[RMDB]
RNA sequence: GGGAACGACUCGAGUAGAGUCGAAAAGAAGUGGCAGGGACAUGCCCCAAAAGCUCGUUCUAGCAACAUAUGUUUGGCUAGUUCGAGCGAUUAGUCUGGAGGAGCGUCCUCUCGCCUCUUCACGAGAACUAGUCCGCUGCUUCGGCAGCGGACUAGUAAAAGAAACAACAACAACAAC
Reactivity to 2A3 in 0.01 (KOAc 150mM, MgCl2 10mM, bicine 150mM(pH8.5), 24C), signal-to-noise 1, nucleotides 027 to 126: g000a000a000g020u000g000g040c020a000g000g010g030a070c040a050u290g130c000c000c000c000a000a000a000a120g000c000u000c000g000u000u000c000u000a000g000c000a150a000c020a130u300a160u300g250u110u100u090g000g050c000u000a000g000u000u000c000g000a000g010c000g000a000u010u090a000g020u000c090u120g010g010a020g000g000a000g110c170g000u040c000c000u020c060u000c100g000c000c000u000c000u000u000c000a080c000g150a090g130a070

An RNA of 177 nucleotides, treated with 2A3 and read out base by base.
The reactions ran in a buffer of 150 mM KOAc, 10 mM MgCl2 and 150 mM bicine (pH 8.5), at 24 C.
It was measured as part of the RMDB library OK1LIB.